[RMDB]
RNA sequence: GGGAACGACUCGAGUAGAGUCGAAAAGGUUGGGUUGGGAAGUAUCAUGGCUAAUCACCAUGAUGCAAUCGGGUUGAACACUUAAUUGGGUUAAAACGGUGGGGGACGAUCCCGUAACAUCCGUCCUAACGGCGACAGACUGCACGGCCCUGCCUCUCUAAACAAAAUCCUUCGGGAUUUUGUUUAGAAAAGAAACAACAACAACAAC
Reactivity to 2A3 in 0.01 (KOAc 150mM, MgCl2 10mM, bicine 150mM(pH8.5), 24C), signal-to-noise 1, nucleotides 027 to 156: g030g020u190u000g000g060g030u140u240g160g010g000a170a050g010u000a000u000c000a010u000g000g050c000u010a000a040u010c010a010c010c000a000u000g000a000u000g000c010a000a030u120c100g000g020g000u070u110g030a040a010c060a040c070u020u280a120a060u280u160g000g000g040u060u110a000a230a100a080c030g000g010u090g020g000g000g000g070a010c090g000a010u030c010c020c030g000u000a000a000c000a060u040c010c030g010u000c030c020u050a080a010c030g050g010c000g010a030c020a030g010a060c030u070g050c060a000c010g030g000c000c000c000u020g000c010c000u020c000u030